[RMDB]
RNA sequence: GGGAACGACUCGAGUAGAGUCGAAAAAGGAUUGCAUCAUCCUCGUAGGGCAGCUUGAAGAUGUCGGGAUUGAUGUAUGUGAAUAGGCCAAACAGCGCGAACAGAACCGAGAAAGCCAGACUACCGAACAGUGUAAAGAGUUCGCUCUUUACACUGUAAAAGAAACAACAACAACAAC
Reactivity to DMS in 0.01 (KOAc 150mM, MgCl2 10mM, bicine 150mM(pH8.5), 24C), signal-to-noise 8, nucleotides 027 to 126: a070g000g000a070u010u000g010c040a040u000c020a120u000c010c010u000c130g020u000a100g010g010g010c050a030g010c060u000u000g020a120a110g010a060u000g010u000c030g000g010g000a060u000u010g020a040u010g010u000a040u010g020u010g000a080a100u010a070g010g010c020c040a050a090a100c130a070g020c050g020c070g000a060a060c080a080g000a060a070c080c040g010a090g010a070a070a100g020c020c020a060g000a090c090u000a100c050c050g010a090
Reactivity to 2A3 in 0.01 (KOAc 150mM, MgCl2 10mM, bicine 150mM(pH8.5), 24C), signal-to-noise 5, nucleotides 027 to 126: a010g130g010a080u070u070g010c020a010u020c000a000u010c020c020u040c090g120u120a100g020g040g010c020a020g000c010u100u190g090a100a050g050a090u050g030u060c000g000g040g030a050u060u140g020a010u050g020u020a030u040g020u000g020a090a110u090a110g040g020c020c000a040a090a050c020a040g030c030g000c000g040a030a010c030a040g030a040a010c030c010g000a010g030a110a050a000g020c000c010a010g030a050c030u060a060c020c000g050a060
The data come from the RNA Mapping Database (RMDB), library OK2TST. An RNA of 177 nucleotides, treated with DMS and 2A3 and read out base by base. The reactions ran in a buffer of 150 mM KOAc, 10 mM MgCl2 and 150 mM bicine (pH 8.5), at 24 C. For 2A3 the reverse transcriptase was SuperScript II with manganese. Values cover nucleotides 27 to 126. For DMS the reverse transcriptase was MarathonRT.